Source: RMDB library M2RFPK, as collected in RNAgym.
An RNA of 207 nucleotides, treated with 2A3 and DMS and read out base by base.
As a SHAPE reagent, 2A3 marks flexible, mostly unpaired nucleotides at the ribose 2'-OH.
The DMS profile rests on 2,765 reads.
The reactions ran in a buffer of 150 mM KOAc, 10 mM MgCl2 and 150 mM bicine (pH 8.5), at 24 C.
RNA sequence: GGGAACGACUCGAGUAGAGUCGAAAAGGAGGACGAAGCAUAUUUCUGUUUCUGGAGGAUUAUUUAUAAUCUGCUGGAAAGUCUUGCAGGUGGCUGGGAUAUGUUCAGUCUGGUAGAAUUAAGCACGAAAACGUGUCCUUGUUCGCAAGGACACGAACUUUCUGGUUUAGUUCGCUAAACCAGAAAGAAAAGAAACAACAACAACAAC
Reactivity to 2A3 in 0.01 (KOAc 150mM, MgCl2 10mM, bicine 150mM(pH8.5), 24C), signal-to-noise 2, nucleotides 027 to 156: g070g010a010g030g000a010c020g040a040a020g050c020a040u040a050u100u090u040c080u040g050u030u020u020c020u000g020g030a030g010g010a010u030u030a050u040u200u040a080u030a090a060u040c030u060g030c020u040g040g040a120a090a010g030u020c040u150u050g020c000a000g000g080u050g030g000c020u050g020g000g010a020u010a010u080g050u100u050c040a030g020u020c050u020g000g040u050a060g050a050a080u130u120a090a030g060c040a000c170g020a030a020a070a020c020g010u000g000u000c000c000u000u010g010u020u050c070g010c100a000a000g000g030a000c000a000c000g000a000a000
Reactivity to DMS in 0.01 (KOAc 150mM, MgCl2 10mM, bicine 150mM(pH8.5), 24C), signal-to-noise 1, nucleotides 027 to 156: g000g000a140g040g000a060c020g000a140a170g030c030a070u000a070u010u010u000c010u000g030u000u000u000c020u000g010g000a050g000g010a020u000u000a020u000u000u020a090u000a070a020u000c000u010g010c010u000g010g010a080a020a110g020u000c030u000u000g020c090a130g000g010u000g030g030c000u000g000g000g020a040u000a050u000g010u000u010c060a240g020u000c010u000g010g010u010a070g010a070a110u000u000a020a100g020c010a110c040g010a040a040a070a160c000g040u000g000u000c000c000u000u000g030u000u000c300g060c000a060a010g000g000a010c000a010c030g000a010a070